[RMDB]
RNA sequence: GGGAACGACUCGAGUAGAGUCGAAAAUCAACACCGAGUCAUUGGCGGCCUACGGUGCCAUGGGGCGAAGCAUCAGUACAGACCUUGCCACCGUGGCCGGCAGCCGCGCCGAGGACAAGGCACGCCGCCUCGGGGACCAAUUCGUUGGUCCCCGAGGAAAAGAAACAACAACAACAAC
Reactivity to DMS in 0.01 (KOAc 150mM, MgCl2 10mM, bicine 150mM(pH8.5), 24C), signal-to-noise 1, nucleotides 027 to 126: u000c110a110a160c100a090c030c000g000a300g000u000c000a080u000u020g030g000c040g020g020c150c020u010a070c000g000g000u000g030c000c010a060u000g010g000g020g020c030g000a050a070g000c050a160u000c090a180g000u010a100c290a090g000a020c180c000u000u000g000c060c000a120c000c000g000u000g000g000c020c000g010g000c060a100g010c170c030g000c050g010c050c010g000a080g000g010a050c030a060a160g000g020c010a030c120g020c000c040g020
Reactivity to 2A3 in 0.01 (KOAc 150mM, MgCl2 10mM, bicine 150mM(pH8.5), 24C), signal-to-noise 1, nucleotides 027 to 126: u070c010a000a050c020a030c070c020g030a040g010u050c060a120u080u100g040g000c000g000g010c010c010u020a030c020g240g100u190g030c010c000a020u030g000g030g000g020c080g020a040a010g000c030a100u170c030a040g070u220a060c040a160g030a100c010c000u000u040g020c000c000a300c030c010g010u010g000g000c040c000g000g020c030a010g030c070c020g070c060g020c040c000g010a040g060g010a020c020a010a000g000g040c030a020c100g130c100c040g040
An RNA of 177 nucleotides, treated with DMS and 2A3 and read out base by base. DMS adducts were read by reverse transcription with MarathonRT. 2A3 adducts were read by reverse transcription with SuperScript II with manganese. The data come from the RNA Mapping Database (RMDB), library OK2TRN. The RNA was probed in 150 mM KOAc, 10 mM MgCl2 and 150 mM bicine (pH 8.5) at 24 C. For DMS, 851 sequencing reads were counted. The 2A3 profile rests on 1,160 reads.